Structure probing data (DMS and 2A3) for a 177-nucleotide construct. Values cover nucleotides 27 to 126. For DMS the reverse transcriptase was MarathonRT.

[RMDB]
RNA sequence: GGGAACGACUCGAGUAGAGUCGAAAACUGCCAUGCCUGUCAUCCAGAAGUUCUUUCUGGCACUGACUCGUGGGGCUUUGCGUUCGCAACGCAUGCUCUGUGGAGUGACGAGGGGAGAGCGAAGACAAUCCAGCAUCUAAUUCGUUAGAUGCUGGAUAAAAGAAACAACAACAACAAC
Reactivity to DMS in 0.01 (KOAc 150mM, MgCl2 10mM, bicine 150mM(pH8.5), 24C), signal-to-noise 8, nucleotides 027 to 126: c060u000g010c020c020a060u020g020c040c040u000g000u000c010a040u020c000c010a010g000a030a030g010u020u040c160u020u000u000c000u000g000g000c070a050c040u000g000a030c000u000c170g020u010g010g010g000g000c010u010u020u010g010c010g010u000u010c300g000c160a160a090c010g000c010a030u010g000c020u000c010u000g020u020g000g010a060g020u000g000a080c080g010a100g000g010g000g010a070g000a060g010c040g010a090a090g020a110c220a100
Reactivity to 2A3 in 0.01 (KOAc 150mM, MgCl2 10mM, bicine 150mM(pH8.5), 24C), signal-to-noise 9, nucleotides 027 to 126: c020u040g030c020c000a070u110g040c000c030u050g010u050c000a200u290c000c010a010g010a040a010g080u240u120c060u060u070u010c000u030g000g000c010a050c030u030g020a020c000u010c020g040u050g010g020g010g000c000u100u100u050g000c000g010u020u080c080g010c150a050a020c010g000c010a010u050g010c010u000c010u020g060u070g070g040a040g030u040g030a050c060g030a060g000g010g000g010a030g000a000g000c040g030a070a010g060a040c060a020